[RMDB]
RNA sequence: GGGAACGACUCGAGUAGAGUCGAAAAUAUUAACACGUCUAUGAUCCCCGCAACACGUGUUACGAUCUAACUUCAUGCGGUUGAAUUAUCAUAUCUCUUUGACUACAACACUCCUUGUUACAACCACUCGUGUACUGUCGUUCGCGACAGUACACGAAAAAGAAACAACAACAACAAC
Reactivity to DMS in 0.01 (KOAc 150mM, MgCl2 10mM, bicine 150mM(pH8.5), 24C), signal-to-noise 1, nucleotides 027 to 126: u010a160u000u000a010a100c010a010c010g000u000c080u010a130u030g010a150u010c040c000c000c100g030c090a090a100c200a020c080g000u010g030u000u030a040c220g000a130u000c110u000a050a100c080u000u000c100a080u000g020c120g010g010u000u050g010a070a040u000u000a100u000c070a040u000a020u000c010u000c060u000u000u000g020a050c040u000a030c040a100a110c030a060c050u000c000c030u000u000g000u010u000a050c070a030a130c080c130a090c280
Reactivity to 2A3 in 0.01 (KOAc 150mM, MgCl2 10mM, bicine 150mM(pH8.5), 24C), signal-to-noise 1, nucleotides 027 to 126: u090a020u060u090a020a020c000a000c020g000u010c160u170a190u150g170a170u250c000c000c000c000g000c090a110a170c030a010c120g000u010g000u030u010a010c140g090a030u010c010u060a060a080c000u130u080c080a030u060g000c020g080g090u080u000g060a100a050u170u000a090u150c080a040u070a070u040c080u000c030u070u010u100g030a050c030u040a020c040a110a000c000a020c050u050c000c010u030u080g040u010u040a050c050a070a010c010c020a040c020
Overview:
Structure probing data (DMS and 2A3) for a 177-nucleotide construct. The 2A3 profile rests on 808 reads. Reactivities are given for positions 27 through 126. For DMS the reverse transcriptase was MarathonRT.